Record summary: An RNA of 177 nucleotides, treated with DMS and read out base by base. The reactions ran in a buffer of 150 mM KOAc, 10 mM MgCl2 and 150 mM bicine (pH 8.5), at 24 C. Source: RMDB library RFMREP, as collected in RNAgym. High DMS reactivity at an A or C suggests that its Watson-Crick edge is free. For DMS the reverse transcriptase was MarathonRT. For DMS, 622 sequencing reads were counted.

RNA sequence: GGGAACGACUCGAGUAGAGUCGAAAAUGAAAACUUUAAAUGCGUCAAGUACAUCAAAAGAGGAAACAGAGGGAAAGAACCAGGUUGGCAAACAAGCAAAAAGGCAAGGACGAACCUUCCUCAAGCAUCCUUUAUCCUUCUUCGGAAGGAUAAAGGAAAAAGAAACAACAACAACAAC
Reactivity to DMS in 0.01 (KOAc 150mM, MgCl2 10mM, bicine 150mM(pH8.5), 24C), signal-to-noise 1, nucleotides 027 to 126: u030g000a160a030a050a060c050u030u030u050a140a150a060u000g000c090g000u000c030a060a010g040u010a050c090a060u000c120a050a080a060a140g040a130g000g000a030a190a050c120a060g000a080g030g000g000a090a080a110g010a040a060c040c050a060g040g000u000u000g000g000c030a050a080a030c210a030a100g000c040a010a060a040a010a030g000g000c130a050a010g000g000a050c080g000a010a150c030c040u000u000c010c000u000c100a050a050g010c210a100